[RMDB]
The data come from the RNA Mapping Database (RMDB), library OK3TST. This 207-nucleotide RNA was probed chemically with DMS and 2A3. For DMS, 1,899 sequencing reads were counted. DMS adducts were read by reverse transcription with MarathonRT. 2A3 adducts were read by reverse transcription with SuperScript II with manganese. The reactions ran in a buffer of 150 mM KOAc, 10 mM MgCl2 and 150 mM bicine (pH 8.5), at 24 C.
RNA sequence: GGGAACGACUCGAGUAGAGUCGAAAAGUUGUGAUUAAGUUGAAAUCAUUCAGGCAUGUAUUAGGACUUUUUCAAAUGCAAGUGAGGAAUCUCAUCUCAAAAAUGCCUUAAGCACAUAACACACAAGUCUGGGAGAGGGUCAGGCACAGUGAGAUCAAUCCACUACGUAGUUCGCUACGUAGUGGAUAAAAGAAACAACAACAACAAC
Reactivity to DMS in 0.01 (KOAc 150mM, MgCl2 10mM, bicine 150mM(pH8.5), 24C), signal-to-noise 1, nucleotides 027 to 156: g020u010u000g090u020g030a120u000u000a050a220g030u010u010g010a070a070a140u000c030a170u000u000c080a120g080g000c030a080u000g020u010a080u000u000a040g000g000a050c090u000u000u000u000u000c040a080a160a090u000g010c080a100a070g050u000g010a080g020g000a110a040u000c050u000c040a130u000c070u000c040a050a110a070a110a020u000g000c000c030u000u000a050a040g050c070a020c030a150u010a080a160c020a080c060a080c010a070a050g040u000c010u000g030g020g000a080g000a060g000g010g040u000c070a130g010g050c050a050c050a020g050u000g000a060g010a110u000c030a110
Reactivity to 2A3 in 0.01 (KOAc 150mM, MgCl2 10mM, bicine 150mM(pH8.5), 24C), signal-to-noise 2, nucleotides 027 to 156: g020u040u050g010u010g060a130u140u160a140a090g030u030u040g130a040a030a090u120c070a080u100u100c050a000g040g000c030a030u050g030u200a090u060u110a050g040g030a080c050u050u050u040u050u050c100a090a110a030u080g060c020a040a060g050u030g050a020g020g050a080a070u050c030u030c090a090u030c040u010c050a060a110a080a030a030u040g020c010c000u050u060a050a000g050c010a010c010a110u120a120a030c040a000c010a010c010a100a040g040u000c040u050g000g040g000a040g010a010g010g020g030u020c020a010g020g020c030a000c020a050g050u060g040a030g020a030u030c040a050